RNA sequence: GGGAACGACUCGAGUAGAGUCGAAAAUGUUUGCAAUUCGUUGCAAACAAACUACCGACAACGUUGCUCGGUAUAAACAGCGAACCCUUGGAAACAAGGGAACUAUGGAACGCUUCGGCGUUCCAAACGUUUUUUUAGUUUUCGAACUAAAAAAACGAAAAGAAACAACAACAACAAC
Reactivity to 2A3 in 0.01 (KOAc 150mM, MgCl2 10mM, bicine 150mM(pH8.5), 24C), signal-to-noise 2, nucleotides 027 to 126: u060g010u000u000u010g030c000a010a010u070u110c190g080u060u000g020c000a020a000a010c010a010a060a020c030u020a010c010c000g010a000c000a240a060c230g300u250u130g060c030u030c020g000g030u000a000u070a030a080a020c050a030g090c050g090a090a080c020c000c000u000u000g030g000a040a050a020c000a010a010g000g000g040a000a010c010u010a040u080g010g010a010a000c000g000c020u000u050c210g070g000c010g000u000u000c000c000a000a000a000
Reactivity to DMS in 0.01 (KOAc 150mM, MgCl2 10mM, bicine 150mM(pH8.5), 24C), signal-to-noise 3, nucleotides 027 to 126: u000g000u010u000u000g000c000a030a040u000u000c170g010u010u010g000c000a000a000a000c010a010a080a150c150u010a040c020c000g000a040c040a140a100c230g010u000u000g010c130u000c030g030g000u010a020u010a040a090a060c150a080g010c130g020a070a200c000c010c000u000u000g000g010a100a110a250c000a010a010g000g010g010a010a020c060u000a100u010g000g000a010a010c010g000c010u000u010c130g020g020c000g010u000u000c000c000a000a010a070